Source: RMDB library M2RFPK, as collected in RNAgym. An RNA of 207 nucleotides, treated with 2A3 and DMS and read out base by base. The 2A3 profile rests on 11,592 reads. Values cover nucleotides 27 to 156. For DMS the reverse transcriptase was MarathonRT. The RNA was probed in 150 mM KOAc, 10 mM MgCl2 and 150 mM bicine (pH 8.5) at 24 C. For DMS, 14,668 sequencing reads were counted.
[RMDB]
RNA sequence: GGGAACGACUCGAGUAGAGUCGAAAAGGCUGCGUAUCACUCUAGGGUACGUGAUAGUGCGAUAUAAGAAGCACUGGUACAUGCCGACAGGGACAGUUAAGAGAUGGCCGCAGUCUCGUGUCCCUGCAAAAGGAGUUCUCGUUCGCGAGAACUCCAACUACUUAACAGAGUUCGCUCUGUUAAGUAGAAAAGAAACAACAACAACAAC
Reactivity to 2A3 in 0.01 (KOAc 150mM, MgCl2 10mM, bicine 150mM(pH8.5), 24C), signal-to-noise 8, nucleotides 027 to 156: g020g010c010u020g000c020g000u010a040u070c020a050c150u110c100u160a110g100g000g000u020a010c030g000u020g030a050u090a050g000u000g010c030g010a030u040a030u070a300a100g150a120a010g000c000a000c000u010g020g000u070a060c050a050u180g010c010c010g010a010c040a020g040g010g010a010c010a070g040u130u150a170a030g010a010g010a060u030g050g060c080c030g040c050a020g020u010c000u000c010g040u050g010u010c000c000c010u010g010c020a010a010a020a050g000g000a000g000u010u000c000u000c000g020u050u070c230g000c010g080a000g000a000a000c000u000c000c000a000a000
Reactivity to DMS in 0.01 (KOAc 150mM, MgCl2 10mM, bicine 150mM(pH8.5), 24C), signal-to-noise 4, nucleotides 027 to 156: g020g030c020u000g000c020g020u010a060u000c010a080c080u010c100u000a170g010g040g020u000a020c020g010u000g010a100u000a040g020u000g010c000g000a180u000a170u010a130a190g010a170a300g000c010a000c000u000g010g000u000a050c060a120u000g020c030c000g040a130c020a040g000g010g020a060c010a070g010u000u010a130a110g000a070g010a070u000g020g010c110c110g000c080a220g010u010c010u000c000g000u000g010u000c000c000c000u010g000c030a030a060a100a100g000g010a030g010u000u010c000u000c000g030u000u020c290g000c020g000a040g010a000a000c000u000c000c010a010a040